An RNA of 177 nucleotides, treated with DMS and 2A3 and read out base by base.
The reactions ran in a buffer of 150 mM KOAc, 10 mM MgCl2 and 150 mM bicine (pH 8.5), at 24 C.
RNA sequence: GGGAACGACUCGAGUAGAGUCGAAAAGAUAUGGAACCGCCAGCUUUUGACGCUCCCUCCAUCGGAAACGAUGGAGCGAGCGAUAAGCUGACGGUUCCUAAGUCAAAGCCGAGCUUCGGCUCGGCAACACUAACACUGGGUUCGCCCAGUGUUAGUGAAAAGAAACAACAACAACAAC
Reactivity to DMS in 0.01 (KOAc 150mM, MgCl2 10mM, bicine 150mM(pH8.5), 24C), signal-to-noise 3, nucleotides 027 to 126: g010a020u000a300u020g000g000a000a000c000c000g010c000c000a020g000c000u010u000u000u000g020a250c140g020c000u010c010c170c000u010c000c000a010u000c000g000g000a100a060a150c000g030a020u000g000g020a020g020c300g010a010g000c000g020a020u000a000a020g020c000u000g020a000c010g000g000u010u000c000c000u000a010a060g010u010c010a110a150a180g010c000c000g000a010g000c010u010u020c230g050g000c000u010c010g010g010c000a030a050
Reactivity to 2A3 in 0.01 (KOAc 150mM, MgCl2 10mM, bicine 150mM(pH8.5), 24C), signal-to-noise 2, nucleotides 027 to 126: g010a010u060a040u160g000g000a020a000c010c020g040c000c010a020g020c020u150u140u180u300g230a160c210g000c010u010c070c010c000u020c000c000a000u020c000g000g020a050a040a050c020g000a010u010g010g020a000g000c010g020a000g020c000g000a000u030a020a020g000c000u000g010a000c000g000g000u000u010c000c000u000a000a000g000u010c000a090a140a000g000c000c000g000a000g020c030u110u270c300g130g000c020u000c000g000g000c000a000a000
Overview:
It was measured as part of the RMDB library TTRDES.